An RNA of 207 nucleotides, treated with 2A3 and DMS and read out base by base.
RNA sequence: GGGAACGACUCGAGUAGAGUCGAAAAGUCGGAACAUAACGACGGCGGGCCGGUGCGGAAUCAGGGGGCUACCGUGGGAUAGCGAUGAGACAGCCCCUCCGAUGGCACCAAGCGUCGGAUCGCGGAAAACACUGUAAGCCCUUCGGGGCUUACAGAAGAAUGCUAAUUACUUCGGUAAUUAGCAUUCAAAAGAAACAACAACAACAAC
Reactivity to 2A3 in 0.01 (KOAc 150mM, MgCl2 10mM, bicine 150mM(pH8.5), 24C), signal-to-noise 3, nucleotides 027 to 156: g090u050c030g020g050a180a110c030a100u170a080a040c030g010a000c010g000g000c030g000g030g040c070c040g020g000u020g000c000g020g110a100a090u040c010a030g000g000g000g010g020c000u010a040c010c020g040u080g060g140g080a110u150a070g070c040g080a100u110g010a060g010a090c050a010g010c000c000c000c000u020c010c050g000a000u010g030g000c010a000c000c010a020a010g050c000g040u050c020g050g040a050u030c020g020c020g050g030a050a050a000a030c060a020c010u000g000u000a000a000g000c000c000c000u010u040c140g010g000g000g000c000u000u010a000c000a000g000a000a000
Reactivity to DMS in 0.01 (KOAc 150mM, MgCl2 10mM, bicine 150mM(pH8.5), 24C), signal-to-noise 2, nucleotides 027 to 156: g020u000c000g030g000a140a120c080a170u000a080a050c060g020a050c000g020g030c020g030g010g000c070c080g060g040u000g030c020g030g040a110a060u010c020a080g000g020g020g010g050c030u000a000c020c010g030u000g010g010g030a270u010a120g010c030g020a100u000g050a300g000a100c080a030g000c030c000c000c000u030c000c010g000a030u010g050g000c020a060c000c040a040a160g020c030g030u000c000g040g010a020u000c010g040c040g030g000a050a030a100a080c050a140c000u000g000u000a000a020g010c010c010c030u020u000c300g060g050g000g020c000u020u000a000c000a020g000a100a100
Record summary:
It was measured as part of the RMDB library M2RFPK. The reactions ran in a buffer of 150 mM KOAc, 10 mM MgCl2 and 150 mM bicine (pH 8.5), at 24 C. 2A3 adducts were read by reverse transcription with SuperScript II with manganese. For DMS the reverse transcriptase was MarathonRT.